RNA sequence: GGGAACGACUCGAGUAGAGUCGAAAAGCUUCAUUUCGAUGAAGCAAAAAUCCUAAGUCUCUCGGGAGCCAGCUAGCAUGUGUCGGAAACGACAUAAUGCUUGGACCUGGCUUCUCUAGCGUGGAGAUAUGGAAAAAAAUAUGCUUUCGAGCAUAAAUUAUCUGUUAUGGUUCGCCAUAACAGAUAAAAAAGAAACAACAACAACAAC
Reactivity to DMS in 0.01 (KOAc 150mM, MgCl2 10mM, bicine 150mM(pH8.5), 24C), signal-to-noise 1, nucleotides 027 to 156: g000c010u000u000c000a010u000u000u000c300g020a070u000g000a040a040g030c020a010a070a050a060a110u000c000c000u000a020a190g020u000c000u000c010u000c050g010g020g020a000g020c000c000a000g020c120u000a030g050c000a010u010g070u000g020u020c010g010g020a180a160a300c000g000a050c000a000u010a080a020u010g030c000u010u000g070g000a050c190c020u000g020g020c000u010u000c000u010c050u010a110g040c150g010u000g000g010a020g000a040u000a280u010g000g020a000a030a030a200a120a130a130u000a020u000g010c000u000u000u000c190g040a070g000c020a020u010a030a050a130
Reactivity to 2A3 in 0.01 (KOAc 150mM, MgCl2 10mM, bicine 150mM(pH8.5), 24C), signal-to-noise 2, nucleotides 027 to 156: g000c000u000u000c000a020u110u090u150c140g090a050u010g000a000a020g000c000a040a080a000a000a080u010c000c000u050a160a020g020u000c000u000c000u020c030g000g010g000a000g000c000c000a000g010c000u020a010g030c000a000u000g000u000g000u000c000g040g040a100a110a020c030g020a000c010a030u130a250a050u100g000c000u010u020g000g020a020c000c020u000g000g000c000u030u010c000u000c010u000a020g080c040g190u170g050g010a020g020a010u050a110u100g070g080a030a050a000a000a030a000a050u200a010u130g000c010u140u070u130c290g060a020g010c020a030u040a050a150a040